Chemical mapping of a 177-nucleotide RNA with 2A3 and DMS. Reactivities are given for positions 27 through 126. The data come from the RNA Mapping Database (RMDB), library M2PK50. Conditions: 150 mM KOAc, 10 mM MgCl2 and 150 mM bicine (pH 8.5), 24 C. For DMS, 4,869 sequencing reads were counted.
[RMDB]
RNA sequence: GGGAACGACUCGAGUAGAGUCGAAAAGAAGGCUCCUUCGGGAGCCUUCAAACUGGUGUCCCGACCAGGCUGGAUGUCAAUGCCUGAAGUCAUAGAUCGGGAAAAGUUGCAACUUCGGUUGCAACAACAUAGACUCUGUGUUCGCACAGAGUCUAUGAAAAGAAACAACAACAACAAC
Reactivity to 2A3 in 0.01 (KOAc 150mM, MgCl2 10mM, bicine 150mM(pH8.5), 24C), signal-to-noise 2, nucleotides 027 to 126: g010a000a000g000g010c020u000c010c040u050u090c280g060g000g000a010g000c000c000u000u010c000a000a000a000c010u000g030g000u040g050u040c020c000c010g000a010c000c000a000g030g000c030u090g040g130a240u220g140u300c140a130a020u160g060c000c010u040g040a080a020g010u000c010a020u060a160g170a230u060c040g010g000g000a000a060a000a060g000u000u000g020c000a010a000c000u020u050c140g080g000u010u010g030c000a010a000c000a000a000
Reactivity to DMS in 0.01 (KOAc 150mM, MgCl2 10mM, bicine 150mM(pH8.5), 24C), signal-to-noise 4, nucleotides 027 to 126: g000a020a020g010g000c000u000c000c010u000u010c190g040g020g010a030g020c000c000u000u000c010a010a080a140c050u000g000g010u000g010u000c000c000c000g010a090c010c000a040g010g000c050u000g020g020a120u010g010u000c160a100a070u010g010c040c010u000g000a120a100g010u000c110a110u010a130g000a070u000c020g000g010g020a050a070a090a100g010u000u000g010c000a000a010c000u000u010c180g030g010u010u000g000c000a000a000c000a100a180